[RMDB]
RNA sequence: GGGAACGACUCGAGUAGAGUCGAAAAGCUGAUCAUGAUGUUCGCCGGCUUGACGUCACGGUGGAUGAUUCCGUUCUGAUGACUGAAGUUCAGCGCUUGGCAGGCGUCGGCGAUGACCUCGAUGGCGGACGAUACUGUUAUUCGUAACAGUAUCGUCAAAAGAAACAACAACAACAAC
Reactivity to DMS in 0.01 (KOAc 150mM, MgCl2 10mM, bicine 150mM(pH8.5), 24C), signal-to-noise 4, nucleotides 027 to 126: g010c010u010g010a050u010c070a080u020g000a070u020g000u010u000c010g000c000c030g010g000c020u010u020g000a210c150g000u000c020a040c030g000g040u020g010g000a050u000g000a140u030u010c030c050g010u010u030c090u030g020a110u030g000a030c030u000g000a080a090g010u010u010c080a030g000c010g010c130u020u020g010g010c020a070g020g000c230g020u010c010g000g000c030g000a050u020g010a060c060c040u010c020g000a010u020g000g010c050g010
Reactivity to 2A3 in 0.01 (KOAc 150mM, MgCl2 10mM, bicine 150mM(pH8.5), 24C), signal-to-noise 9, nucleotides 027 to 126: g030c040u070g100a090u060c030a080u140g090a040u060g040u050u020c000g010c010c000g000g010c010u040u110g060a070c030g010u020c020a010c020g060g120u030g020g020a040u060g050a060u070u000c020c020g030u070u050c120u200g230a250u300g020a030c020u040g040a030a020g020u030u030c030a030g050c010g010c110u070u060g040g000c050a080g030g020c010g010u000c000g000g000c000g030a050u070g040a030c010c000u010c040g030a030u060g020g010c030g030